[RMDB]
RNA sequence: GGGAACGACUCGAGUAGAGUCGAAAAAGCGGCGCGAGCUCCGGCGUUGAAGAUGGGGGAGAGAUCGAUACCAGAAAGAGGGAUUACGAAUGUGUUGCAGGGUCGAGGCCUCAAAGAUACUUUGGCAUAUCUUGUAGGGAUUCGUCCCUACAAGAUAAAAAGAAACAACAACAACAAC
Reactivity to DMS in 0.01 (KOAc 150mM, MgCl2 10mM, bicine 150mM(pH8.5), 24C), signal-to-noise 5, nucleotides 027 to 126: a100g020c050g010g010c050g020c040g010a110g010c040u000c060c030g000g010c060g020u000u010g010a090a110g010a110u000g020g010g000g010g000a070g010a080g000a070u000c050g000a110u010a110c060c050a080g000a070a060a090g000a090g010g020g010a090u010u010a090c100g000a070a090u010g010u000g020u000u000g000c070a100g020g010g010u000c050g010a080g000g000c040c020u000c070a030a050a070g010a110u010a080c060u000u010u000g010g020c160a170
Reactivity to 2A3 in 0.01 (KOAc 150mM, MgCl2 10mM, bicine 150mM(pH8.5), 24C), signal-to-noise 2, nucleotides 027 to 126: a000g050c010g000g000c000g000c000g020a060g000c010u000c010c010g040g000c040g000u010u070g070a070a010g070a060u140g000g000g020g030g010a040g000a010g010a010u040c010g000a010u040a120c050c000a010g090a040a080a000g100a080g000g020g040a030u000u130a060c030g050a110a090u110g060u010g030u120u040g020c030a010g000g000g050u050c020g020a020g040g000c020c000u090c050a070a040a000g040a000u100a090c080u000u030u070g050g010c030a020
An RNA of 177 nucleotides, treated with DMS and 2A3 and read out base by base. DMS adducts were read by reverse transcription with MarathonRT. The RNA was probed in 150 mM KOAc, 10 mM MgCl2 and 150 mM bicine (pH 8.5) at 24 C. For 2A3, 2,052 sequencing reads were counted.